[RMDB]
RNA sequence: GGGAACGACUCGAGUAGAGUCGAAAAAGAGCAGGCGUUACGACGCCUGCUCAAACGUGUGUCAUUUUUCUAUUAUGCAACUUUUUUUUCAUGUUAGUUGCAUAGUAACAAAAGUGAUCAUACGUAACUCGCCGAAGAAAUUCGUUUCUUCGGCGAGAAAAGAAACAACAACAACAAC
Reactivity to 2A3 in 0.01 (KOAc 150mM, MgCl2 10mM, bicine 150mM(pH8.5), 24C), signal-to-noise 1, nucleotides 027 to 126: a010g000a000g000c010a000g010g000c000g050u080u060a070c300g010a000c000g040c000c000u010g030c000u000c000a000a000a000c000g000u000g010u000g000u000c000a000u000u000u000u000u000c050u010a000u000u000a010u000g010c000a000a000c000u020u020u020u070u010u040u090u160c250a190u290g080u110u090a000g000u010u000g000c000a000u000a020g000u000a000a090c030a010a000a010a010g000u000g000a050u240c000a010u030a000c020g010u020a030a030
Annotation:
Source: RMDB library RFM100, as collected in RNAgym. Structure probing data (2A3) for a 177-nucleotide construct. As a SHAPE reagent, 2A3 marks flexible, mostly unpaired nucleotides at the ribose 2'-OH. Reactivities are given for positions 27 through 126. 2A3 adducts were read by reverse transcription with SuperScript II with manganese. Conditions: 150 mM KOAc, 10 mM MgCl2 and 150 mM bicine (pH 8.5), 24 C.